The record gives the reactivity of an RNA of 177 nucleotides to DMS and 2A3. For DMS, 3,347 sequencing reads were counted.
RNA sequence: GGGAACGACUCGAGUAGAGUCGAAAAAGUCUGCCCGGCGGACGACAGCCACGUUCAUUUCGUUUGAUAAUCAGUUGUGAGUAAUAAAAAGUGUUGUCGCCUUGUUGCUCUCAGCCAUGCGCAGGGCGCAGCACUACCCAUUCGUGGGUAGUGCUGCAAAAGAAACAACAACAACAAC
Reactivity to DMS in 0.01 (KOAc 150mM, MgCl2 10mM, bicine 150mM(pH8.5), 24C), signal-to-noise 2, nucleotides 027 to 126: a080g000u040c010u010g030c000c030c020g000g030c060g020g030a070c050g020a100c090a090g000c000c030a020c070g000u000u010c050a080u020u010u010c070g010u000u030u010g010a110u000a030a040u030c140a100g020u000u000g000u020g010a090g000u000a060a130u070a100a090a080a150a110g000u010g010u030u000g000u010c040g020c020c040u020u000g000u000u050g010c040u010c050u020c170a040g000c060c080a050u000g020c000g010c030a020g000g000g040c010
Reactivity to 2A3 in 0.01 (KOAc 150mM, MgCl2 10mM, bicine 150mM(pH8.5), 24C), signal-to-noise 3, nucleotides 027 to 126: a000g060u060c020u050g060c020c010c000g050g000c020g000g020a030c000g000a000c000a010g020c060c000a080c060g040u050u040c030a100u020u070u090c040g080u010u050u140g150a140u120a190a080u170c100a140g030u030u020g060u060g060a070g050u100a100a150u060a140a120a040a020a010g050u050g030u020u000g000u030c000g010c000c000u020u030g000u050u250g000c000u000c000u000c070a020g010c020c020a060u170g010c020g000c010a010g030g000g000c000